[RMDB]
RNA sequence: GGGAACGACUCGAGUAGAGUCGAAAACAGCUUGAUCACUCUUGUGGUUUAUACAAGUACGACAAGACAAUUUUGGAGGAGUUUGAUGACAAAGUUAUCAUGAACGUGCUGUCAAGCGAGCUUCCUACCAUGUCCGAACGUUCGCGUUCGGACAUGGAAAAGAAACAACAACAACAAC
Reactivity to 2A3 in 0.01 (KOAc 150mM, MgCl2 10mM, bicine 150mM(pH8.5), 24C), signal-to-noise 4, nucleotides 027 to 126: c000a010g020c000u030u080g010a160u140c000a000c020u100c020u040u050g030u010g080g120u180u210u060a180u020a040c040a040a010g020u010a060c050g010a030c010a010a000g030a050c030a110a180u080u110u100u090g120g010a070g020g050a130g050u060u060u050g030a000u050g000a040c020a030a150a000g000u040u010a070u170c100a050u130g070a060a000c020g010u050g030c010u040g010u020c010a060a000g050c010g030a020g040c020u060u040c030c000u000a090
Reactivity to DMS in 0.01 (KOAc 150mM, MgCl2 10mM, bicine 150mM(pH8.5), 24C), signal-to-noise 2, nucleotides 027 to 126: c050a190g020c000u000u000g000a100u030c080a010c280u000c060u000u030g090u000g000g000u010u010u030a100u060a040c120a070a000g000u030a110c040g000a170c030a020a010g000a080c160a040a100u000u050u000u000g000g000a120g020g000a130g000u000u050u050g000a300u080g000a030c020a030a000a160g010u000u000a120u000c100a180u000g020a080a030c000g000u000g000c010u000g020u010c060a000a000g020c080g000a120g000c090u000u000c000c010u000a160